[RMDB]
RNA sequence: GGGAACGACUCGAGUAGAGUCGAAAAGGAGGACCUCAAACCCGUGCUAUGCCGGCAGAUGGAGGUCUACGCGGGCUUUCUGGAAUACACCGACCACCACGUCGGCCGGCUCGUCGACGGCCUGCAGCUAUGACCACACUUUCGAGUGUGGUCAUAGAAAAGAAACAACAACAACAAC
Reactivity to 2A3 in 0.01 (KOAc 150mM, MgCl2 10mM, bicine 150mM(pH8.5), 24C), signal-to-noise 2, nucleotides 027 to 126: g080g050a050g030g020a010c000c000u020c010a130a150a190c050c010c000g030u050g050c030u130a100u250g050c000c010g020g000c040a020g040a130u130g030g040a030g030g000u000c000u010a020c090g000c020g020g010g000c000u060u200u110c080u130g040g120a130a050u170a160c060a050c060c020g070a040c000c020a090c010c040a040c030g030u000c000g000g040c040c020g000g000c020u000c040g070u040c060g020a040c010g000g020c000c000u020g000c010a030g030
Reactivity to DMS in 0.01 (KOAc 150mM, MgCl2 10mM, bicine 150mM(pH8.5), 24C), signal-to-noise 3, nucleotides 027 to 126: g010g010a180g020g000a040c020c000u000c040a070a130a140c080c010c020g030u000g020c040u000a100u030g020c070c030g010g010c060a060g020a120u000g010g000a010g000g010u000c000u000a020c150g040c000g020g020g000c030u000u000u010c070u020g010g010a130a060u000a170c230a140c030c020g000a060c030c180a100c150c150a120c160g020u000c020g000g010c010c020g000g000c030u000c110g010u000c080g020a040c070g000g000c010c010u000g020c080a160g010